Background:
An RNA of 177 nucleotides, treated with 2A3 and DMS and read out base by base. The RNA was probed in 150 mM KOAc, 10 mM MgCl2 and 150 mM bicine (pH 8.5) at 24 C. The DMS profile rests on 941 reads. It was measured as part of the RMDB library M2PK50. For DMS the reverse transcriptase was MarathonRT. Values cover nucleotides 27 to 126.
[RMDB]
RNA sequence: GGGAACGACUCGAGUAGAGUCGAAAAGUGGCAUACUUCGGUAUGCCACAAACCUGACCCUAUCUGGAACACGCUCUACUGCGUGAUCCCAAGUAGAUCCCAAAAGUCGUGGGUUCGCCCACGACAACCCAUAUACGAGCUUCGGCUCGUAUAUGGGAAAAGAAACAACAACAACAAC
Reactivity to 2A3 in 0.01 (KOAc 150mM, MgCl2 10mM, bicine 150mM(pH8.5), 24C), signal-to-noise 3, nucleotides 027 to 126: g010u000g000g020c010a000u020a000c010u010u040c180g050g000u000a010u010g010c000c000a000c000a010a000a000c000c000u040g060a030c000c010c010u020a020u080c030u010g000g010a040a010c010a000c020g020c010u090c090u250a200c190u150g000c000g000u010g010a040u010c020c000c000a070a010g020u020a020g040a120u030c010c030c010a030a100a040a040g000u000c010g010u010g010g020g040u020u040c290g070c010c000c000a000c010g000a000c000a000a000
Reactivity to DMS in 0.01 (KOAc 150mM, MgCl2 10mM, bicine 150mM(pH8.5), 24C), signal-to-noise 1, nucleotides 027 to 126: g030u000g010g050c000a020u030a000c010u000u000c260g040g000u000a010u000g000c000c000a010c000a010a080a030c080c050u000g000a060c140c060c000u030a030u000c090u000g000g010a050a100c020a000c010g000c000u000c300u010a080c180u000g020c000g040u010g000a080u000c010c000c080a070a010g020u010a050g000a100u000c000c000c000a080a110a180a070g000u000c000g020u000g000g010g010u000u000c290g000c000c010c000a010c000g000a010c000a010a100